[RMDB]
RNA sequence: GGGAACGACUCGAGUAGAGUCGAAAAGAUAUGGAUCCUCGGAGGGAGCUCGUCGGAAACGACGGAGCAUCGAUCUCCAGGAUCCUAAGUCAAAAUCAGUUCAUGAGGUUCGCCUCAUGAACUGAAACACAAGACCGUGGUUCGCCACGGUCUUGUGAAAAGAAACAACAACAACAAC
Reactivity to 2A3 in 0.01 (KOAc 150mM, MgCl2 10mM, bicine 150mM(pH8.5), 24C), signal-to-noise 1, nucleotides 027 to 126: g010a010u050a050u190g000g000a000u030c020c110u060c300g000g000a030g020g030g010a020g020c040u010c000g000u000c010g020g030a040a040a040c010g030a000c250g060g060a030g030c000a170u260c020g060a090u010c000u000c020c000a020g000g000a000u000c010c010u040a050a000g060u000c030a000a050a000a300u060c000a000g030u000u010c000a020u010g000a000g000g140u100u200c300g110c170c020u020c020a000u020g000a000a000c000u000g010a000a000a000
Reactivity to DMS in 0.01 (KOAc 150mM, MgCl2 10mM, bicine 150mM(pH8.5), 24C), signal-to-noise 1, nucleotides 027 to 126: g000a020u000a300u030g000g000a010u000c000c000u010c170g030g000a010g000g000g000a010g080c030u000c020g010u010c020g010g010a110a070a180c010g000a010c000g020g040a010g060c000a190u010c160g010a040u010c010u010c000c000a040g000g020a040u010c000c000u000a000a070g000u010c000a130a050a110a100u000c000a000g000u000u000c000a010u000g020a020g010g000u000u020c290g000c010c010u000c010a010u000g000a000a000c000u020g000a000a070a120
An RNA of 177 nucleotides, treated with 2A3 and DMS and read out base by base. The 2A3 profile rests on 1,546 reads. For DMS, 916 sequencing reads were counted.